[RMDB]
RNA sequence: GGGAACGACUCGAGUAGAGUCGAAAAUAGUGGAAGCUUUGCCCAUUUCUUUAGUUAGUCCCGAAGAGUGUGCAGCGGCGUUUUGAUUGUCAGCUACUUUUUCAGGAGCCACGUACAAUCCGUGAACGACAUGCAUUAGUUUCGACUAAUGCAUGUCAAAAGAAACAACAACAACAAC
Reactivity to 2A3 in 0.01 (KOAc 150mM, MgCl2 10mM, bicine 150mM(pH8.5), 24C), signal-to-noise 6, nucleotides 027 to 126: u220a020g080u080g060g020a100a030g050c040u080u060u070g030c030c000c020a040u050u150u020c020u040u120u040a090g030u070u060a050g040u050c010c020c020g040a100a020g040a000g030u110g020u050g000c050a040g020c020g060g010c040g020u040u060u080u220g090a070u040u080g010u020c010a010g000c020u050a130c020u100u120u040u030u110c040a020g020g050a010g010c020c000a080c030g080u160a030c050a030a050u030c030c020g060u050g060a050a010c060
Reactivity to DMS in 0.01 (KOAc 150mM, MgCl2 10mM, bicine 150mM(pH8.5), 24C), signal-to-noise 3, nucleotides 027 to 126: u050a050g000u010g000g030a120a070g010c040u000u000u010g000c030c000c010a140u000u000u020c020u000u030u040a090g020u000u000a070g010u010c030c020c030g020a150a080g000a060g010u010g030u000g020c030a080g010c040g010g000c060g000u030u030u010u030g000a060u010u000g010u000c020a060g000c030u000a080c030u000u000u040u030u030c190a080g000g000a030g020c040c040a020c070g030u030a040c070a060a050u020c100c040g000u010g020a070a090c160
The record gives the reactivity of an RNA of 177 nucleotides to 2A3 and DMS.
The DMS profile rests on 6,029 reads.
The 2A3 profile rests on 4,409 reads.
For DMS the reverse transcriptase was MarathonRT.
The RNA was probed in 150 mM KOAc, 10 mM MgCl2 and 150 mM bicine (pH 8.5) at 24 C.